[RMDB]
RNA sequence: GGGAACGACUCGAGUAGAGUCGAAAAGCUCCGGCGCCAGAGGAUGUGGCUGCGGCCGAUUAGGUAGACGGUGGGGUAACGGCCCACCGUGCCAGUAAUCGGUACGGGUUGUGAGAGCAAGAGCCCGCUAAAGCAAGAGGUUCGCCUCUUGCUUUAGAAAAGAAACAACAACAACAAC
Reactivity to DMS in 0.01 (KOAc 150mM, MgCl2 10mM, bicine 150mM(pH8.5), 24C), signal-to-noise 2, nucleotides 027 to 126: g010c020u000c010c040g010g030c090g010c030c020a050g010a110g000g000a090u000g030u000g000g000c000u000g050c050g000g000c010c010g000a040u000u000a050g010g010u000a110g020a080c010g030g010u000g000g010g000g010u000a080a070c300g000g000c000c010c000a000c010c000g020u010g010c000c010a160g010u000a020a020u000c010g010g000u000a030c040g020g000g030u000u020g010u010g000a180g000a060g010c020a100a100g010a200g010c020c000c000g020